[RMDB]
RNA sequence: GGGAACGACUCGAGUAGAGUCGAAAACAGCAGGCUGGUAUCGCUAUGGUCCAGCGGAGUCCAUUGAGUGAGCCUGCACCCCAACUUGCAGCAGACAGUGCUGUGUCGAGUUCUCCGCGGGUGAUUAUCAGCAGGAUUAGUUCGCUAAUCCUGCUGAAAAAGAAACAACAACAACAAC
Reactivity to DMS in 0.01 (KOAc 150mM, MgCl2 10mM, bicine 150mM(pH8.5), 24C), signal-to-noise 2, nucleotides 027 to 126: c240a110g030c020a040g000g020c010u010g010g020u010a100u020c030g010c060u010a080u000g000g000u020c050c050a180g030c070g010g000a080g010u000c000c010a060u000u010g020a060g010u000g000a020g000c000c000u000g010c000a180c060c000c020c080a070a090c130u010u020g020c020a030g000c020a050g020a170c300a110g010u010g030c000u010g000u000g010u000c110g020a090g000u010u000c050u020c020c010g010c020g010g010g010u010g000a070u010u000a190
Reactivity to 2A3 in 0.01 (KOAc 150mM, MgCl2 10mM, bicine 150mM(pH8.5), 24C), signal-to-noise 1, nucleotides 027 to 126: c040a050g000c000a010g010g020c000u110g060g160u110a130u170c010g000c060u000a030u090g040g000u070c080c030a050g040c010g040g000a040g010u000c020c000a090u030u150g080a040g030u110g040a000g020c000c000u020g000c020a050c030c000c000c000a020a040c050u140u180g030c000a030g000c000a000g220a300c040a150g160u040g040c010u000g010u000g020u080c040g030a020g090u180u030c020u000c010c000g000c080g040g030g040u180g060a100u080u090a080